[RMDB]
RNA sequence: GGGAACGACUCGAGUAGAGUCGAAAACAGUGGGGAAUAUUGCACAAUGGAGGAAACUCUGAUGCAGCGACGCCGCGUGAGGGAAGAAGGUCUUCGGAUUGUAAACCUCUGUCUUUCGGGACGAAGGUACAAUUUACUCGUUCGCGAGUAAAUUGUAAAAAGAAACAACAACAACAAC
Reactivity to DMS in 0.01 (KOAc 150mM, MgCl2 10mM, bicine 150mM(pH8.5), 24C), signal-to-noise 3, nucleotides 027 to 126: c060a070g010u020g000g010g000g000a150a050u000a100u030u000g000c040a040c080a090a060u010g000g020a020g010g000a080a090a160c030u000c010u000g010a090u010g010c030a040g010c070g000a150c110g010c050c030g000c100g010u010g010a050g000g000g000a040a080g020a140a270g000g000u000c040u010u010c180g010g000a060u000u010g000u010a020a090a300c010c000u000c010u010g010u000c030u000u000u010c140g000g000g030a020c010g010a050a040g010g000
Reactivity to 2A3 in 0.01 (KOAc 150mM, MgCl2 10mM, bicine 150mM(pH8.5), 24C), signal-to-noise 1, nucleotides 027 to 126: c010a050g050u040g010g000g000g000a040a080u100a110u230u130g000c030a040c000a030a120u100g020g020a040g020g030a080a070a030c010u050c040u060g050a100u050g000c000a020g020c010g070a010c020g040c070c000g000c030g010u080g010a020g030g030g000a000a150g010a010a020g060g000u000c000u030u060c110g090g000a030u000u080g030u050a020a010a030c010c000u000c030u010g010u030c000u040u050u100c110g070g020g000a010c000g010a070a020g080g000
Chemical mapping of a 177-nucleotide RNA with DMS and 2A3.
It was measured as part of the RMDB library OK2TRN.
Reactivities are given for positions 27 through 126.
For DMS the reverse transcriptase was MarathonRT.
The RNA was probed in 150 mM KOAc, 10 mM MgCl2 and 150 mM bicine (pH 8.5) at 24 C.